Notes: Chemical mapping of a 177-nucleotide RNA with DMS and 2A3. High 2A3 reactivity points to a flexible backbone, as in loops and unpaired stretches. The 2A3 profile rests on 1,138 reads. The DMS profile rests on 1,713 reads. Conditions: 150 mM KOAc, 10 mM MgCl2 and 150 mM bicine (pH 8.5), 24 C. For DMS the reverse transcriptase was MarathonRT.
RNA sequence: GGGAACGACUCGAGUAGAGUCGAAAAUGGUCGGCGGAAGAGGAAGCGGAGUUCAAGCGCCCGACGCUCGAAAUGUUCGAGCGCCAGAGCCACCCGCUCUAUGCCUCGGCGCGGCUUUGGGAUGACAGUACCCAUCCGUAUUCGUACGGAUGGGUACAAAAGAAACAACAACAACAAC
Reactivity to DMS in 0.01 (KOAc 150mM, MgCl2 10mM, bicine 150mM(pH8.5), 24C), signal-to-noise 2, nucleotides 027 to 126: u000g000g000u010c050g030g020c000g020g000a150a120g020a040g000g020a220a080g010c030g000g000a200g000u000u020c140a080a080g020c200g020c020c010c020g000a020c000g000c030u000c010g010a020a290a110u010g010u000u000c000g010a000g000c010g020c000c010a070g000a020g030c000c040a090c040c020c020g000c010u000c180u020a110u030g020c010c000u010c030g000g000c020g040c040g010g000c020u010u010u000g000g000g020a110u020g010a090c170a120
Reactivity to 2A3 in 0.01 (KOAc 150mM, MgCl2 10mM, bicine 150mM(pH8.5), 24C), signal-to-noise 1, nucleotides 027 to 126: u100g030g000u070c060g150g090c000g040g030a060a040g020a130g000g000a050a000g030c020g000g020a210g070u080u150c050a040a010g060c040g020c280c000c020g040a030c010g020c010u010c000g090a110a160a060u300g050u200u030c030g000a000g000c010g000c000c000a000g010a000g010c020c000a000c000c020c000g030c000u000c030u090a130u170g100c020c000u010c000g000g000c040g010c010g040g000c000u120u050u020g060g030g000a070u140g020a010c040a130